[RMDB]
RNA sequence: GGGAACGACUCGAGUAGAGUCGAAAAGAUAUGGAUUCCUUUGAUCCUCGAUUCGAGUGGAUCGGAAACGAUCCCUCGACAGGAUUGGGGAGGAAUCCUAAGUCAAAUCCUUCGUUCGCGAAGGAAAUCCCGUCUACAUGUUCGCAUGUAGACGGGAAAAAGAAACAACAACAACAAC
Reactivity to DMS in 0.01 (KOAc 150mM, MgCl2 10mM, bicine 150mM(pH8.5), 24C), signal-to-noise 1, nucleotides 027 to 126: g020a030u000a300u000g010g010a000u000u000c000c000u000u010u010g000a020u000c000c000u010c230g020a190u000u000c010g010a000g050u030g050g000a000u020c020g020g010a100a070a190c000g000a010u000c000c020c020u000c010g000a000c020a000g000g010a000u000u000g000g000g000g030a060g000g020a010a000u000c000c000u010a010a110g020u000c020a170a260a120u000c000c000u000u000c000g030u000u010c260g000c010g000a010a000g000g000a020a080a110
Reactivity to 2A3 in 0.01 (KOAc 150mM, MgCl2 10mM, bicine 150mM(pH8.5), 24C), signal-to-noise 2, nucleotides 027 to 126: g020a000u030a060u150g000g000a030u000u020c010c000u030u040u240g080a050u030c020c030u080c200g240a300u190u030c010g000a020g050u300g000g020a000u020c010g000g000a080a070a010c010g020a000u010c000c000c000u000c000g020a010c000a010g090g030a110u090u170g050g020g100g030a030g020g000a000a000u000c020c020u020a110a020g050u000c050a070a030a200u020c010c040u000u000c020g040u000u090c300g000c020g140a010a000g000g000a040a070a000